[RMDB]
RNA sequence: GGGAACGACUCGAGUAGAGUCGAAAACGAAGGUUAUCAAUUAAUGCAAUCCCGCUUACCUGAAAUCGACGGGGACUUUGAAUUAGAGUCAACAGAUGCACUACCACAUCUAUAUAUGAUUGGUAACAACCUCACAUAGUUUCGACUAUGUGAGGUUAAAAGAAACAACAACAACAAC
Reactivity to 2A3 in 0.01 (KOAc 150mM, MgCl2 10mM, bicine 150mM(pH8.5), 24C), signal-to-noise 4, nucleotides 027 to 126: c030g060a090a000g130g010u030u010a010u020c020a020a020u040u130a120a050u150g050c030a020a110u060c020c010c000g000c050u060u100a100c010c030u040g080a060a080a030u120c070g090a090c020g070g000g000g010a010c010u030u060u100g160a160a120u180u110a090g010a000g080u020c010a010a040c000a110g030a030u020g010c110a020c090u070a040c080c000a010c010a040u020c020u050a060u010a010u030a030u270g030a010u000u010g010g000u000a000a020c010
Reactivity to DMS in 0.01 (KOAc 150mM, MgCl2 10mM, bicine 150mM(pH8.5), 24C), signal-to-noise 5, nucleotides 027 to 126: c100g010a110a110g020g000u000u000a040u000c020a030a040u000u010a040a090u020g030c120a120a110u010c030c010c000g010c070u000u010a120c140c040u000g000a060a070a100u000c080g010a120c010g000g000g010g010a030c040u000u000u000g010a090a080u020u020a060g000a040g000u000c020a090a090c160a020g010a020u000g000c040a070c070u000a100c130c110a050c030a010u000c020u000a070u010a090u000a080u030g000a020u000u000g010g010u000a010a060c080